[RMDB]
RNA sequence: GGGAACGACUCGAGUAGAGUCGAAAAUACAGGUUCGCCUGUACUAUGAGGGGUCCCACGACGAUCGAUGCCGAGCAUCGAUCCUGAAGCCUCCACGGGGGAGCUCGCGCAUCGGGAGUGGGACGGAGGCACCCAUUUACCUACGUUCGCGUAGGAAUAGCUUUUUAUGUUUCGACAUAAAAAGCUAAAAAGAAACAACAACAACAAC
Reactivity to DMS in 0.01 (KOAc 150mM, MgCl2 10mM, bicine 150mM(pH8.5), 24C), signal-to-noise 1, nucleotides 027 to 156: u000a010c000a000g000g030u000u010c300g020c000c000u010g000u010a000c040u020a120u000g040a130g000g000g010g010u000c010c000c000a120c040g010a080c120g000a050u000c000g000a030u000g030c050c030g010a100g040c000a280u000c130g000a040u000c010c000u000g000a070a180g010c030c010u010c020c050a300c080g000g000g000g030g020a090g030c030u000c000g050c180g030c030a050u000c000g000g000g010a080g030u000g010g040g030a020c010g000g020a050g070g010c050a150c020c030c010a150u010u000u010a100c010c000u010a010c010g010u000u000c290g050c030g050u000a000g000g000a080a180
Reactivity to 2A3 in 0.01 (KOAc 150mM, MgCl2 10mM, bicine 150mM(pH8.5), 24C), signal-to-noise 4, nucleotides 027 to 156: u050a000c010a010g020g060u070u100c160g130c030c000u010g000u060a060c100u110a090u150g040a090g010g030g010g000u010c020c010c000a000c000g060a050c010g010a010u070c010g000a000u020g020c000c000g000a010g000c020a120u300c060g060a070u040c010c010u040g030a100a010g060c010c020u000c050c010a030c010g000g000g000g010g000a020g000c000u000c010g070c040g000c020a000u000c000g000g010g000a010g000u010g000g000g010a010c010g000g030a020g000g000c060a060c000c010c030a040u130u180u200a160c000c010u000a010c030g040u030u090c260g020c030g090u010a000g010g000a010a060